[RMDB]
RNA sequence: GGGAACGACUCGAGUAGAGUCGAAAACUUAUUCACGUUUGCAAUGAUCGCUCAUUUCAACAUUUUCGUUUGUGUAGAUAUCUUCAAGUUCUCACUGAUUGACUUUAAGUAAAUGCAUUGUAGUUGAAUUUAACUACUAAAGUGAUCGUUGUAAACAGUACACACCAGGGUUCGCCCUGGUGUGUACAAAAGAAACAACAACAACAAC
Reactivity to 2A3 in 0.01 (KOAc 150mM, MgCl2 10mM, bicine 150mM(pH8.5), 24C), signal-to-noise 2, nucleotides 027 to 156: c030u060u080a100u300u260c060a000c150g000u000u000u000g000c000a030a000u020g040a010u010c000g000c040u060c080a130u040u260u120c040a150a060c110a110u220u300u250u300c100g100u050u060u120g050u050g000u020a020g060a180u030a060u060c000u000u010c030a010a060g030u270u050c050u050c150a300c250u300g040a300u170u200g000a010c020u030u010u010a010a000g000u010a000a020a130u000g000c000a020u070u150g000u020a000g000u000u020g130a140a120u130u170u150a020a010c020u060a000c060u150a100a060a020g000u010g000a000u000c000g000u000u000g000u000a000a000a000c010a000